[RMDB]
RNA sequence: GGGAACGACUCGAGUAGAGUCGAAAAGCUUCCUCAACAACCUUCGAAUGAGGAUGAAAAAGAGCGUAUAACAACUGCAGAUUACGCCGAUUCAACUAGUUUGGAGCGAUUGGAAUCUCAGGAACCAUACGCCUGGAUAUUUCGAUAUCCAGGCGUAAAAAGAAACAACAACAACAAC
Reactivity to 2A3 in 0.01 (KOAc 150mM, MgCl2 10mM, bicine 150mM(pH8.5), 24C), signal-to-noise 1, nucleotides 027 to 126: g030c070u050u030c020c010u030c010a000a100c030a040a080c030c070u110u120c090g100a190a050u050g030a060g010g030a050u100g180a020a090a030a010a040g040a010g090c000g030u060a030u000a110a080c070a070a120c060u100g040c170a000g030a040u030u050a000c030g030c010c000g030a030u000u030c000a020a020c020u050a040g080u030u050u020g030g030a020g020c030g090a140u110u020g080g000a050a090u000c040u040c040a080g110g000a050a050c030c000a020
Reactivity to DMS in 0.01 (KOAc 150mM, MgCl2 10mM, bicine 150mM(pH8.5), 24C), signal-to-noise 1, nucleotides 027 to 126: g040c200u010u000c010c000u000c000a040a130c070a030a100c100c060u000u030c100g030a110a190u000g010a010g010g040a160u010g000a030a030a110a180a100g000a140g020c000g000u000a070u000a130a080c120a090a170c160u010g010c160a020g000a070u000u000a060c010g030c050c000g000a130u000u000c000a000a000c040u000a150g030u000u000u000g000g000a010g010c020g020a060u000u000g010g000a010a150u010c040u000c000a040g000g000a220a020c030c080a120

Structure probing data (2A3 and DMS) for a 177-nucleotide construct. Conditions: 150 mM KOAc, 10 mM MgCl2 and 150 mM bicine (pH 8.5), 24 C. As a SHAPE reagent, 2A3 marks flexible, mostly unpaired nucleotides at the ribose 2'-OH. For 2A3, 596 sequencing reads were counted. Source: RMDB library OK2TST, as collected in RNAgym.